Record summary:
An RNA of 207 nucleotides, treated with 2A3 and read out base by base. The 2A3 profile rests on 529 reads.
RNA sequence: GGGAACGACUCGAGUAGAGUCGAAAAAAGAAGAAGGAAAUCCUGACAUUUUUGACAAAAUGGAUGAACUGGGAGGACAUUAUGCUAAAUGAGAUAAGCCAAAAACAGAAAGACAAAUACUGCAUUACUGCAUGAUCUCACUUAUAUGGCUGGGGGACGAUGCAUUACCGUUCGCGGUAAUGCAUCGAAAAGAAACAACAACAACAAC
Reactivity to 2A3 in 0.01 (KOAc 150mM, MgCl2 10mM, bicine 150mM(pH8.5), 24C), signal-to-noise 2, nucleotides 027 to 156: a000a000g120a030a000g000a000a040g020g000a040a020a020u040c000c060u030g040a010c020a050u130u090u080u170u210g050a070c040a040a090a010a010u040g010g040a010u030g040a010a070c070u060g020g000g000a000g010g020a010c000a010u040u040a070u230g070c020u070a090a100a090u150g000a050g010a090u020a050a020g020c050c040a000a070a030a030a000c040a000g200a030a140a030g070a040c040a040a120a010u150a080c100u030g010c010a040u000u210a150c040u160g000c000a040u220g060a050u060c030u040c010a050c070u070u000a040u030a000u300g000g000c000u010g020g000g000g000g020a000
The reactions ran in a buffer of 150 mM KOAc, 10 mM MgCl2 and 150 mM bicine (pH 8.5), at 24 C. For 2A3 the reverse transcriptase was SuperScript II with manganese.